[RMDB]
RNA sequence: GGGAACGACUCGAGUAGAGUCGAAAAACAGGGAUAGUUCGAGCUUGAGUUGCGAGUCGGGGGGAUCGUCCUCGUUAUCAACGUCAAAGCCAAUAAUAACUGGCAAAGAAAAACAAAACCUAGCUUUCGCUGCCUAAUAAGCAGUAGCAUAGCUGAUGGUCAGUAGCUCCUUCGGGAGCUACUGACCAAAAGAAACAACAACAACAAC
Reactivity to 2A3 in 0.01 (KOAc 150mM, MgCl2 10mM, bicine 150mM(pH8.5), 24C), signal-to-noise 4, nucleotides 027 to 156: a000c010a000g020g000g020a020u090a110g050u140u200c070g000a000g000c030u060u070g050a050g050u080u060g050c070g050a040g090u100c000g010g000g000g010g000g010a020u170c010g030u050c010c000u000c000g020u020u000a010u020c010a010a000c000g020u010c010a000a040a020g010c010c020a010a010u140a120a030u130a090a090c080u040g000g000c020a040a090a010g050a030a070a020a010a010c050a020a050a010a000c000c000u010a000g000c000u000u000u020c010g000c000u000g000c000c000u040a060a030u210a100a000g000c000a000g010u040a030g000c030a020u030a000g000c000u040g020a110u070
Reactivity to DMS in 0.01 (KOAc 150mM, MgCl2 10mM, bicine 150mM(pH8.5), 24C), signal-to-noise 1, nucleotides 027 to 156: a080c030a030g010g010g020a070u000a070g050u000u000c070g040a100g030c030u030u010g000a170g000u010u000g020c030g000a220g080u020c020g030g060g000g000g030g010a060u000c080g000u000c010c030u020c030g040u030u010a150u010c290a010a040c020g000u000c010a100a110a200g000c040c030a020a120u010a130a060u000a040a110c100u000g000g000c010a050a030a270g030a080a090a040a070a070c110a070a060a120a010c030c010u010a050g000c040u010u000u000c000g010c000u000g000c000c000u000a140a030u020a040a040g000c010a010g040u000a090g080c200a030u010a060g030c000u000g010a130u000
Structure probing data (2A3 and DMS) for a 207-nucleotide construct. Conditions: 150 mM KOAc, 10 mM MgCl2 and 150 mM bicine (pH 8.5), 24 C.